[RMDB]
RNA sequence: GGGAACGACUCGAGUAGAGUCGAAAAACGUAGUCACUACGGUGACUACGAUGGGACGGAUGGUCGACCAGCUGGAAAGUAAUUGUCUCUAAUGUACUUCACCUGGUCCACUAGCCGUCGGUGCCAAACCCAAUCCCUGCUUCGGCAGGGAUUGGGUAAAAGAAACAACAACAACAAC
Reactivity to 2A3 in 0.01 (KOAc 150mM, MgCl2 10mM, bicine 150mM(pH8.5), 24C), signal-to-noise 2, nucleotides 027 to 126: a000c010g000u000a000g000u000c000a010c020u030a010c170g100g010u000g000a000c000u000a000c030g020a060u080g090g020g000a020c030g000g000a020u000g020g000u030c010g000a000c010c000a000g010c070u190g120g050a140a020a010g070u030a080a010u030u050g180u080c030u000c050u300a020a080u130g060u160a000c000u000u000c000a020c030c000u010g000g000u000c000c000a000c000u010a000g000c000c000g000u010c000g000g040u100g020c010c000a070a050

Source: RMDB libraries RFM100 and RFMREP, as collected in RNAgym. This 177-nucleotide RNA was probed chemically with 2A3. As a SHAPE reagent, 2A3 marks flexible, mostly unpaired nucleotides at the ribose 2'-OH. For 2A3 the reverse transcriptase was SuperScript II with manganese. The RNA was probed in 150 mM KOAc, 10 mM MgCl2 and 150 mM bicine (pH 8.5) at 24 C.